[RMDB]
RNA sequence: GGGAACGACUCGAGUAGAGUCGAAAAGGGGAUGUUACGGAUUCGACAGGGAUAGUUCGAGCUUGAGUUGCGAGUCGGGGGGAUCGUCCUCGUUAUCAACGUCAAAGCCAAUAAUAACUGGCAAAGAAAAACAAAACCUAGCUUUCGCUGCCUAAUACUAUUAGCUACACUUCGGUGUAGCUAAUAGAAAAGAAACAACAACAACAAC
Reactivity to DMS in 0.01 (KOAc 150mM, MgCl2 10mM, bicine 150mM(pH8.5), 24C), signal-to-noise 2, nucleotides 027 to 156: g000g030g030g040a080u000g010u000u000a050c040g050g020a200u020u010c010g020a080c030a040g040g010g040a080u010a100g050u000u000c070g030a100g050c070u000u000g010a110g000u000u000g000c030g040a130g020u030c050g090g010g030g000g040g020a080u000c060g010u000c000c020u000c050g000u000u000a070u010c160a050a050c080g040u010c030a110a070a170g000c000c010a010a050u010a090a130u000a080a150c070u000g000g010c020a040a030a150g000a060a060a060a050a130c050a040a020a070a080c030c010u000a090g000c030u020u010u000c080g030c060u000g010c020c050u010a040a140u000a110
Reactivity to 2A3 in 0.01 (KOAc 150mM, MgCl2 10mM, bicine 150mM(pH8.5), 24C), signal-to-noise 3, nucleotides 027 to 156: g000g000g000g000a020u040g020u040u060a060c040g020g100a130u070u080c010g020a010c080a050g000g010g040a030u060a090g070u060u140c050g020a020g010c060u020u030g030a020g030u040u030g030c070g070a030g050u120c030g000g000g000g000g000g020a000u200c010g070u110c000c000u010c000g020u020u030a020u060c020a000a020c020g040u010c000a000a040a080g010c000c040a030a010u160a080a020u090a100a080c090u030g010g000c000a020a110a020g030a010a060a010a010a020c070a000a110a010a000c000c040u020a020g020c000u010u040u050c050g000c050u040g000c010c010u080a120a040u140a180